The record gives the reactivity of an RNA of 207 nucleotides to 2A3. The RNA was probed in 150 mM KOAc, 10 mM MgCl2 and 150 mM bicine (pH 8.5) at 24 C. For 2A3, 581 sequencing reads were counted. It was measured as part of the RMDB library M2RFPK. Values are in units of 0.01, from 0 to 300, in steps of 10.
RNA sequence: GGGAACGACUCGAGUAGAGUCGAAAAUCCGACGAGCUGAAAGCUUUCGAAGGAAAGCUUGACCAGCUAAUCUUCUGCAACGCCAUUACGAGGACUGCCCUUAGAGGCUCAUGGCGAUAGGUCACCCAAAACUAUUUGAGGUUCGCCUCAAAUAGAACUGUUUACUCUCCUUCGGGAGAGUAAACAGAAAAGAAACAACAACAACAAC
Reactivity to 2A3 in 0.01 (KOAc 150mM, MgCl2 10mM, bicine 150mM(pH8.5), 24C), signal-to-noise 1, nucleotides 027 to 156: u050c020c000g030a050c050g050a020g000c000u000g010a030a000a000g010c000u010u000u000c030g060a140a080g190g020a000a040a000g000c000u030u000g000a000c020c020a010g020c020u030a050a040u120c100u080u020c090u060g100c080a120a100c000g000c000c000a050u020u050a080c110g000a050g050g210a090c070u100g040c000c000c000u050u050a110g030a090g150g020c050u040c020a000u030g010g000c000g040a050u010a070g050g030u020c010a070c010c030c000a000a070a020a060c030u040a050u020u010u000g000a000g010g000u000u110c290g030c030c000u030c000a000a000a000u000a000g000a010a000